Structure probing data (DMS and 2A3) for a 177-nucleotide construct. DMS adducts were read by reverse transcription with MarathonRT. For 2A3 the reverse transcriptase was SuperScript II with manganese. It was measured as part of the RMDB library M2PK90.
[RMDB]
RNA sequence: GGGAACGACUCGAGUAGAGUCGAAAAUAACUCCUCCCGCCAGAGCCGCUAAGGUGGAAACGCUAUGCGGUACUGCCUGAUAGGGUGCUUGCGAGUGCCGCGGGAGGUCUCGUAGAAAAUAACCUAACAUAUUAACCAGUUUCGACUGGUUAAUAUGAAAAGAAACAACAACAACAAC
Reactivity to DMS in 0.01 (KOAc 150mM, MgCl2 10mM, bicine 150mM(pH8.5), 24C), signal-to-noise 8, nucleotides 027 to 126: u010a100a070c140u000c000c000u000c000c000c000g030c010c010a040g020a300g010c010c000g020c010u010a080a090g010g020u000g000g000a110a080a120c010g020c010u000a300u010g000c000g000g010u000a100c010u000g010c000c040u010g000a160u020a100g010g000g020u010g000c060u000u000g000c040g010a030g030u000g010c010c030g000c000g000g000g010a020g000g000u000c010u000c010g010u000a100g000a090a050a090a120u010a090a110c040c010u000a070a240
Reactivity to 2A3 in 0.01 (KOAc 150mM, MgCl2 10mM, bicine 150mM(pH8.5), 24C), signal-to-noise 5, nucleotides 027 to 126: u050a000a020c010u000c010c000u000c020c010c000g000c000c000a010g020a020g020c000c010g000c040u060a160a070g010g000u020g020g000a040a070a000c010g000c020u030a010u150g000c000g020g000u030a120c000u000g000c000c010u130g080a160u200a150g040g030g030u110g010c010u030u040g020c030g020a010g010u010g000c000c000g000c000g000g000g000a000g000g000u000c000u000c010g000u020a040g190a040a140a020a050u130a060a030c010c020u030a060a040
The DMS profile rests on 9,107 reads. Values cover nucleotides 27 to 126. Conditions: 150 mM KOAc, 10 mM MgCl2 and 150 mM bicine (pH 8.5), 24 C. The 2A3 profile rests on 13,970 reads.